[RMDB]
RNA sequence: GGGAACGACUCGAGUAGAGUCGAAAAGUUCGGGCUCGAGCGAAGGCUUGUGGUUCGGGCAUUCUUAGAGCGGAGGAGACUGCGUGAGGCUGGUUUCACAGAGCAGCGUCCACCUCCCGCUUUCGACGGUGGAAGGAUCACGGGCCGGUGCCUUCUGGAAGGUUUAAAACUUCGGUUUUAAACCUUCAAAAGAAACAACAACAACAAC
Reactivity to 2A3 in 0.01 (KOAc 150mM, MgCl2 10mM, bicine 150mM(pH8.5), 24C), signal-to-noise 1, nucleotides 027 to 156: g010u030u030c000g050g100g000c060u050c040g000a010g030c020g040a090a020g070g000c000u000u020g020u040g000g010u000u000c050g020g080g030c020a040u180u100c000u050u040a000g010a010g040c000g020g000a010g000g000a020g030a040c010u180g060c030g040u120g070a100g100g040c020u020g070g000u150u210u190c150a110c020a020g020a030g060c020a000g000c010g040u020c000c070a220c020c020u000c000c050c050g000c000u030u080u010c010g070a090c020g040g000u010g020g060a110a070g010g010a010u040c040a000c010g000g000g000c000c010g000g020u020g040c010c010u040u030c040u040g060